[RMDB]
RNA sequence: GGGAACGACUCGAGUAGAGUCGAAAACUAUAUACGUAUGUUUUACUGGAGAAGAAUUUCAAAAAUACCUAAAUAGCACAAAGUAGAAAAUGUUAUCAGUAAUCCUAACACUAAGAAAUAAUCGCAAUUUUUUUGGACAUGUAUCUUCCCAGUGUUAGCGUAGUCAUAGUUUCGACUAUGACUACGCAAAAGAAACAACAACAACAAC
Reactivity to 2A3 in 0.01 (KOAc 150mM, MgCl2 10mM, bicine 150mM(pH8.5), 24C), signal-to-noise 2, nucleotides 027 to 156: c010u060a040u030a010u060a250c040g080u160a220u140g000u000u170u000u000a000c000u000g000g030a230g020a150a000g000a060a040u020u060u080c010a010a010a010a010a010u020a030c070c000u090a170a090a050u020a060g030c000a020c000a070a180a060g050u130a070g150a100a120a010a040u110g010u070u010a030u200c020a000g000u060a070a140u000c010c020u060a130a000c060a040c020u010a060a030g100a050a190a050u180a020a050u220c040g040c060a000a010u010u000u000u010u010u030u020g000g000a010c020a050u140g070u180a100u030c010u000u000c010c000c000a000g020u000g020u030u150a010
The record gives the reactivity of an RNA of 207 nucleotides to 2A3.